[RMDB]
RNA sequence: GGGAACGACUCGAGUAGAGUCGAAAAGGACAGGCCCGUGUCUGCCUUUGUGAGAUGGGCCCUGCACCUUGCAUAUACCAGGUUCCCAGCCACAGGGGGCAGUAGGUACAACAGGUGUCAUGUGGGGACCCCGUCAAUACUUCGGUAUUGACGGGGUAAAAGAAACAACAACAACAAC
Reactivity to 2A3 in 0.01 (KOAc 150mM, MgCl2 10mM, bicine 150mM(pH8.5), 24C), signal-to-noise 2, nucleotides 027 to 126: g070g000a050c060a020g000g020c000c000c030g060u070g280u050c010u030g070c050c010u200u190u140g150u150g000a110g020a160u080g060g020g050c070c000c000u000g020c020a300c010c040u010u040g000c080a040u090a030u010a260c040c010a000g020g040u050u020c060c000c000a000g040c030c000a040c060a190g000g000g110g000g000c000a030g140u270a090g030g000u110a080c020a160a100c020a090g070g020u080g010u060c010a040u040g040u110g030g000g000g030
Reactivity to DMS in 0.01 (KOAc 150mM, MgCl2 10mM, bicine 150mM(pH8.5), 24C), signal-to-noise 2, nucleotides 027 to 126: g000g010a300c030a060g000g000c000c000c000g050u010g010u000c000u020g000c050c030u000u000u080g000u020g000a060g010a050u000g000g020g000c300c030c040u030g010c020a110c080c000u000u060g010c220a070u000a300u000a130c150c000a160g000g000u010u000c000c010c000a100g000c030c020a070c060a090g000g010g000g010g000c000a010g040u050a040g000g060u010a030c260a030a150c100a020g000g010u000g010u000c060a040u000g020u020g000g000g000g000

Source information
Structure probing data (2A3 and DMS) for a 177-nucleotide construct. The 2A3 profile rests on 777 reads. It was measured as part of the RMDB library OK1LIB. Reactivities are given for positions 27 through 126. 2A3 adducts were read by reverse transcription with SuperScript II with manganese. DMS adducts were read by reverse transcription with MarathonRT.